[RMDB]
RNA sequence: GGGAACGACUCGAGUAGAGUCGAAAAGAAAGAAAGAAUGGCUGUAGCUAUAUUAAAUCGAAGAAUCUUACUGGCCGGUUAUUGUGACUCUGUCGAUAAAUCUGCUUACCGAGUUUCUCACAUUUAAAUGAAGAGGGUAAUUCGUUACCCUCUUCAUAAAAGAAACAACAACAACAAC
Reactivity to 2A3 in 0.01 (KOAc 150mM, MgCl2 10mM, bicine 150mM(pH8.5), 24C), signal-to-noise 4, nucleotides 027 to 126: g060a030a010a010g090a040a070a000g070a030a040u040g050g000c020u070g040u160a030g010c010u020a030u040a070u250u200a170a070a040u080c030g020a080a030g050a100a030u060c060u080u120a050c000u040g030g020c020c020g010g000u080u020a090u050u190g040u060g020a010c000u010c000u070g050u040c010g010a020u040a030a080a040u010c010u020g000c010u040u020a080c070c000g020a020g020u000u020u000c010u020c000a040c000a100u090u190u140a100a240
Reactivity to DMS in 0.01 (KOAc 150mM, MgCl2 10mM, bicine 150mM(pH8.5), 24C), signal-to-noise 6, nucleotides 027 to 126: g010a090a080a100g010a120a080a080g010a090a050u010g020g020c040u010g010u020a090g010c030u010a060u010a090u010u020a050a080a070u020c080g010a090a080g020a080a040u010c030u010u010a050c080u010g010g000c010c020g000g010u000u000a040u000u000g010u000g000a090c050u020c030u010g010u010c010g000a040u000a050a070a090u010c040u000g010c020u000u000a050c100c030g010a070g000u000u000u000c010u010c050a110c190a070u020u010u020a040a070
Chemical mapping of a 177-nucleotide RNA with 2A3 and DMS. Values cover nucleotides 27 to 126. The data come from the RNA Mapping Database (RMDB), libraries RFM100 and RFMREP. 2A3 adducts were read by reverse transcription with SuperScript II with manganese.